Notes
Conditions: 150 mM KOAc, 10 mM MgCl2 and 150 mM bicine (pH 8.5), 24 C. Chemical mapping of a 177-nucleotide RNA with 2A3 and DMS. For DMS the reverse transcriptase was MarathonRT.

RNA sequence: GGGAACGACUCGAGUAGAGUCGAAAACAUUUAUUCAUUAUCAUAGGCACGAUUAUCAUAGGUGCCAAUGCCAUUAUACGUGUAGAGAGUUGGUAGAGAGACAGUAUUAAGUGGACAUCAACGCAUCGCGGGAGGAAUUAUUCGUAAUUCCUCCCGCAAAAGAAACAACAACAACAAC
Reactivity to 2A3 in 0.01 (KOAc 150mM, MgCl2 10mM, bicine 150mM(pH8.5), 24C), signal-to-noise 2, nucleotides 027 to 126: c010a010u140u200u220a260u220u190c070a000u040u200a060u240c040a010u030a110g010g080c000a000c040g120a050u110u160a040u140c110a130u060a180g070g080u000g020c000c000a040a000u000g020c000c020a030u080u090a080u100a080c090g010u130g030u130a060g030a020g000a020g100u110u080g080g080u110a080g000a000g000a000g030a080c000a000g080u070a120u210u130a110a000g020u000g060g020a050c000a000u040c000a000a060c050g040c110a050u120c130
Reactivity to DMS in 0.01 (KOAc 150mM, MgCl2 10mM, bicine 150mM(pH8.5), 24C), signal-to-noise 2, nucleotides 027 to 126: c030a100u020u010u020a030u000u010c070a130u010u000a070u000c010a050u000a140g010g010c000a010c050g030a100u000u000a130u000c190a110u000a090g010g040u000g000c000c020a080a040u010g000c090c050a020u010u000a120u000a060c130g010u000g000u000a050g030a060g010a070g010u000u000g020g030u000a060g010a080g020a090g000a020c090a030g000u000a030u010u010a080a100g010u000g000g000a050c110a050u000c070a040a040c120g010c160a050u010c100